[RMDB]
RNA sequence: GGGAACGACUCGAGUAGAGUCGAAAAACGGCGAUUUAAGUGCCGAUAUCCGGCAGCUUGAGAACGCGCUGGCACGUUGUGCCAGCCAGGUAAAAAUGAUUAAACACUGUCAGGACGAAAAUGAUGCUCAAACCCGACAGCCUGCGCAGGGCGCUGAGCAUCGUACUACGUUCGCGUAGUACGAUGCAAAAGAAACAACAACAACAAC
Reactivity to 2A3 in 0.01 (KOAc 150mM, MgCl2 10mM, bicine 150mM(pH8.5), 24C), signal-to-noise 2, nucleotides 027 to 156: a000c000g010g020c000g030a010u060u010u300a130a030g050u070g050c010c000g060a030u030a100u170c120c000g000g020c020a020g050c040u090u100g080a010g050a130a020c030g010c010g000c080u000g040g000c030a020c250g300u300u260g020u040g010c000c030a000g000c000c000a010g010g060u070a040a110a010a010a010u110g040a080u130u170a040a110a060c080a030c050u000g000u020c020a060g080g000a060c090g070a090a090a040a040u250g020a010u130g020c000u050c120a040a100a190c000c000c000g010a030c040a000g030c000c030u120g030c070g000c060a080g060g000g000c030g010c030u040g010a030

An RNA of 207 nucleotides, treated with 2A3 and read out base by base. Conditions: 150 mM KOAc, 10 mM MgCl2 and 150 mM bicine (pH 8.5), 24 C. For 2A3 the reverse transcriptase was SuperScript II with manganese. 2A3 is a SHAPE reagent: it acylates the 2'-hydroxyl of flexible nucleotides of all four kinds. The 2A3 profile rests on 751 reads.